[RMDB]
RNA sequence: GGGAACGACUCGAGUAGAGUCGAAAAUGGAUGGAUCAAAUUGGAAAGGAGAAAGUUCACACUCAGGUAACAUGAAGUGGAAUUUGGCCUCAUUUCAGGUUGCCCAACUAGUAACACAGGAUAACUGGUAAGGUUUAGAAAAUGAAGUAGGGACAGGAAAUAGGGCUUUGUUCGCAAAGCCCUAUUUAAAAGAAACAACAACAACAAC
Reactivity to DMS in 0.01 (KOAc 150mM, MgCl2 10mM, bicine 150mM(pH8.5), 24C), signal-to-noise 2, nucleotides 027 to 156: u010g000g000a080u000g000g030a090u000c040a050a040a200u000u010g000g010a090a090a090g070g000a110g010a060a050a080g020u010u000c080a110c040a050c020u000c050a050g000g000u010a060a070c030a090u010g020a050a050g030u010g050g000a080a120u000u000u000g010g000c080c070u010c020a060u010u000u020c000a000g030g040u000u010g000c020c000c030a050a070c090u000a090g000u000a050a060c070a200c030a050g030g020a120u000a060a070c060u000g000g000u000a050a060g020g010u000u000u000a190g010a050a060a060a080u000g020a050a100g030u000a050g000g000g010a050c020a070g000g020
Reactivity to 2A3 in 0.01 (KOAc 150mM, MgCl2 10mM, bicine 150mM(pH8.5), 24C), signal-to-noise 2, nucleotides 027 to 156: u100g010g020a010u010g010g000a030u040c070a000a110a050u050u060g010g010a050a050a030g050g000a010g000a000a070a010g040u090u100c050a030c000a020c190u080c070a040g020g020u090a060a010c030a050u040g040a030a000g010u030g040g070a070a060u120u060u110g080g020c000c000u060c030a050u000u030u030c020a010g030g030u020u020g010c000c010c000a050a020c020u050a020g060u060a070a020c040a020c020a040g040g040a070u070a150a050c010u020g000g060u050a080a060g070g000u040u080u060a030g040a070a060a040a050u120g020a050a040g020u080a010g030g030g000a050c070a010g050g050